[RMDB]
RNA sequence: GGGAACGACUCGAGUAGAGUCGAAAAGCACCAUAGAAGCCUGGAUUUUGCCCCAAGGUAUGGCUGCCUGGUAUCUACGAAGAACUGUAGAAAAACAUGGAUGAUACGCAGAGAAGCGGACAAACGCCUAGUGCUUACAGUUCGCUGUAAGCACUAGAAAAGAAACAACAACAACAAC
Reactivity to DMS in 0.01 (KOAc 150mM, MgCl2 10mM, bicine 150mM(pH8.5), 24C), signal-to-noise 5, nucleotides 027 to 126: g000c080a120c010c010a090u030a100g020a120a140g010c030c020u000g000g010a090u010u000u020u040g020c050c020c060c080a140a080g020g020u010a030u010g000g010c020u000g030c030c030u010g000g010u000a090u000c000u020a040c030g000a110a110g000a090a100c130u010g000u000a030g000a050a060a050a090a100c080a050u010g000g020a110u010g000a130u030a080c050g010c020a020g000a050g020a030a050g000c020g000g000a070c130a030a040a050c070g000c040
Reactivity to 2A3 in 0.01 (KOAc 150mM, MgCl2 10mM, bicine 150mM(pH8.5), 24C), signal-to-noise 6, nucleotides 027 to 126: g040c020a030c030c010a020u020a090g190a150a030g060c010c030u070g050g020a110u100u060u060u230g070c030c000c000c020a070a040g040g010u090a070u070g030g000c030u010g020c010c010u010g040g000u040a030u010c010u010a010c030g030a050a130g100a150a050c080u120g000u030a020g050a060a040a010a000a010c040a070u120g040g000a010u030g020a020u050a090c020g010c050a000g020a010g020a070a020g010c020g000g060a020c050a020a060a000c030g020c010